[RMDB]
RNA sequence: GGGAACGACUCGAGUAGAGUCGAAAAGAUAUGGAAGGUCGAGGUUGGUACUUUGAUCAGGAACUAGCUUUCGGAAACGAAAGCUAGUUCCUGGGAGUACCCAACUACCCACCGACCUUCCUAAGUCCAAUAGGGCUUGGUUCGCCAAGCCCUAUUGAAAAGAAACAACAACAACAAC
Reactivity to DMS in 0.01 (KOAc 150mM, MgCl2 10mM, bicine 150mM(pH8.5), 24C), signal-to-noise 1, nucleotides 027 to 126: g010a110u010a300u010g000g010a030a000g000g010u010c000g010a060g010g010u000u000g010g020u000a000c010u000u020u010g010a230u020c000a010g040g000a010a040c000u000a010g010c000u000u010u000c000g010g000a090a110a300c000g000a000a000a000g000c000u010a020g010u000u000c000c020u000g000g000g000a020g030u000a010c210c050c160a000a010c020u000a030c010c060c150a300c080c010g000a020c000c000u010u000c000c000u010a040a060g010u000c070